[RMDB]
RNA sequence: GGGAACGACUCGAGUAGAGUCGAAAAGAUAUGGAGGUAGCUACCCACCCGUCAUUAAGCUAUGAAGACGCAAGAUCGGAAACGAUCUUGCGUUGGAGCUUAGGGACGGAGGCUACCUCCUAAGUCACGUAAUUAUAGAGUUCGCUCUAUAAUUACGAAAAGAAACAACAACAACAAC
Reactivity to DMS in 0.01 (KOAc 150mM, MgCl2 10mM, bicine 150mM(pH8.5), 24C), signal-to-noise 5, nucleotides 027 to 126: g010a120u020a150u000g010g020a010g000g000u000a000g000c010u010a130c050c040c090a300c060c000c000g010u000c000a060u000u000a010a010g010c020u000a300u020g010a130a280g000a010c000g010c000a010a000g000a010u000c000g000g000a090a040a170c000g010a010u000c000u000u000g010c000g010u000u000g000g010a020g000c000u000u000a010g000g000g000a020c010g000g000a060g020g000c000u000a000c000c000u000c000c000u000a010a060g000u000c110a190
Reactivity to 2A3 in 0.01 (KOAc 150mM, MgCl2 10mM, bicine 150mM(pH8.5), 24C), signal-to-noise 5, nucleotides 027 to 126: g160a060u240a180u300g000g000a000g000g010u010a000g030c010u130a300c030c020c030a020c000c000c010g000u000c010a040u010u030a010a000g000c010u110a300u300g130a090a010g000a000c000g000c000a000a000g000a000u000c000g040g000a040a040a040c000g010a000u000c000u020u020g000c010g000u000u000g000g010a010g000c000u000u000a010g010g020g020a000c000g000g000a000g020g000c000u000a000c000c000u010c000c000u010a010a000g040u040c060a010